[RMDB]
RNA sequence: GGGAACGACUCGAGUAGAGUCGAAAACGAUCCUCGAGAGAGGAUCGACGAGUCUUCGGACUCGAUUACCGCGAAGAUGUGCCGCGGGGCUACGAUGGUAUUGUGGGAAAGAAUACCAUUGUACCUUCUUGUCGUAGCCGAACAACUUGCACGUCGAAUGGCAGGAUACUUUCGAGUAUCCUGCCAUAAAAGAAACAACAACAACAAC
Reactivity to 2A3 in 0.01 (KOAc 150mM, MgCl2 10mM, bicine 150mM(pH8.5), 24C), signal-to-noise 3, nucleotides 027 to 156: c010g000a000u000c000c010u000c000g070a080g000a000g000a000g040g000a000u010c000g000a010c000g010a000g000u000c010u060u130c160g130g000a000c000u010c000g000a080u140u200a100c000c000g020c010g010a050a070g000a010u000g000u000g000c010c000g000c010g020g020g010g000c000u000a000c000g010a000u070g000g000u000a000u000u070g020u010g000g000g060a060a150a120g130a090a100u150a120c000c000a000u000u010g000u000a000c000c030u100u220c140u150u250g020u000c000g000u000a010g000c010c000g000a040a010c030a010a100c030u120u090g000c010a000c000g000u000c000g000a020